[RMDB]
Description:
This 177-nucleotide RNA was probed chemically with DMS and 2A3. DMS adducts were read by reverse transcription with MarathonRT. The RNA was probed in 150 mM KOAc, 10 mM MgCl2 and 150 mM bicine (pH 8.5) at 24 C.

RNA sequence: GGGAACGACUCGAGUAGAGUCGAAAACCCCAACUGCUCGACAUGAGGGGUGUUGAUGUCGGGGGAAACCCUCCCGUGAACCAGCGGGAUAGAGAGAAAGACAAAGACCGGGAAUAAACUAAAGCGCACCUAUUAUUGACUUCGGUCAAUAAUAGGUAAAAGAAACAACAACAACAAC
Reactivity to DMS in 0.01 (KOAc 150mM, MgCl2 10mM, bicine 150mM(pH8.5), 24C), signal-to-noise 6, nucleotides 027 to 126: c040c000c010c080a090a170c140u010g010c020u010c090g020a140c110a060u020g000a250g010g010g010g020u010g000u010u000g000a290u010g010u000c010g020g010g000g010g000a060a100a170c030c010c000u000c010c010c010g010u000g000a120a180c140c130a130g010c000g000g010g000a040u010a030g000a230g010a120g000a010a030a040g020a030c040a050a080a210g000a070c050c070g010g000g010a110a090u020a050a090a080c110u010a040a080a070g010c160g010c160
Reactivity to 2A3 in 0.01 (KOAc 150mM, MgCl2 10mM, bicine 150mM(pH8.5), 24C), signal-to-noise 6, nucleotides 027 to 126: c000c000c000c000a030a050c020u070g020c000u040c040g130a110c060a120u100g050a110g040g040g000g020u070g030u020u040g040a080u070g020u030c010g000g000g000g000g010a030a030a030c010c000c010u000c010c000c000g000u010g030a090a110c060c010a020g010c020g010g020g000a010u070a010g120a000g010a000g010a010a050a010g020a010c020a040a080a000g030a030c020c020g010g030g070a050a090u150a110a110a030c150u140a130a070a030g100c100g010c040